[RMDB]
RNA sequence: GGGAACGACUCGAGUAGAGUCGAAAAUUACCGCCCAGGAUGGGGUGCAGCGUUCCUGCAAUAUCCAGGGCACCUAGGUGCAGACUUGUAGUUUUAGUGGACUUUAGGCUAAAGAAUUUCACUAGCAAAAAUCUUUAAGGGUUCGCCCUUAAAGAAACUAUGUCGUUAUCUUCGGAUAACGACAUAGAAAAGAAACAACAACAACAAC
Reactivity to 2A3 in 0.01 (KOAc 150mM, MgCl2 10mM, bicine 150mM(pH8.5), 24C), signal-to-noise 1, nucleotides 027 to 156: u060u000a110c030c020g010c040c030c000a000g070g040a000u050g040g020g000g130u030g010c000a020g000c000g150u150u040c050c000u000g080c050a000a050u020a000u140c010c010a010g000g020g000c040a010c000c050u040a040g010g000u030g050c060a050g060a200c020u100u060g090u220a170g050u060u000u000u140a000g000u040g000g000a030c050u060u090u020a050g070g000c070u110a120a070a060g080a080a080u040u170u150c020a030c000u050a060g030c080a000a000a000a160a260u050c000u030u000u010a000a020g050g000g010u000u070c160g140c050c000c000u000u000a010a000a000g010a000a010a000